[RMDB]
RNA sequence: GGGAACGACUCGAGUAGAGUCGAAAAGGGGGAGCUCCCUCCCCAUCCUUGUCCUUUCUUAUUAUUCCUCGGAUGUUCCCCAGCCAGGGAUUGUCCUCCUCGAGUCUCUUGAGAUUCUUGUUGACCUGAAACAUCCCCUUCGGGGGAUGUAAAAGAAACAACAACAACAAC
Reactivity to DMS in 0.01 (KOAc 150mM, MgCl2 10mM, bicine 150mM(pH8.5), 24C), signal-to-noise 3, nucleotides 027 to 129: g010g010g010g000g020a080g000c190u050c060c040c010u040c000c000c000c000a120u050c020c050u030u120g000u020c020c100u000u090u060c000u000u040a090u090u000a100u030u020c030c000u010c080g000g070a150u060g030u000u000c090c020c010c040a130g010c000c070a070g060g000g000a010u050u020g030u030c000c050u040c060c050u010c070g000a100g040u010c030u020c010u010u040g000a110g090a090u060u040c060u000u070g010u040u030g000a130c080c030u050g030a100a180
Reactivity to 2A3 in 0.01 (KOAc 150mM, MgCl2 10mM, bicine 150mM(pH8.5), 24C), signal-to-noise 3, nucleotides 027 to 129: g000g020g000g000g020a000g050c060u110c080c000c000u040c000c000c000c000a010u010c000c000u050u060g040u050c010c020u030u090u120c020u010u110a200u090u090a090u110u050c040c020u040c030g060g000a080u080g060u030u030c020c010c000c010a000g040c040c030a050g020g010g020a020u010u140g020u040c000c000u000c000c000u020c030g010a020g000u010c020u000c000u010u020g090a110g030a180u030u040c000u030u020g030u020u020g010a040c000c050u050g030a100a040
Chemical mapping of a 170-nucleotide RNA with DMS and 2A3. The data come from the RNA Mapping Database (RMDB), library 15KLIB. Conditions: 150 mM KOAc, 10 mM MgCl2 and 150 mM bicine (pH 8.5), 24 C. For 2A3 the reverse transcriptase was SuperScript II with manganese. The DMS profile rests on 8,274 reads.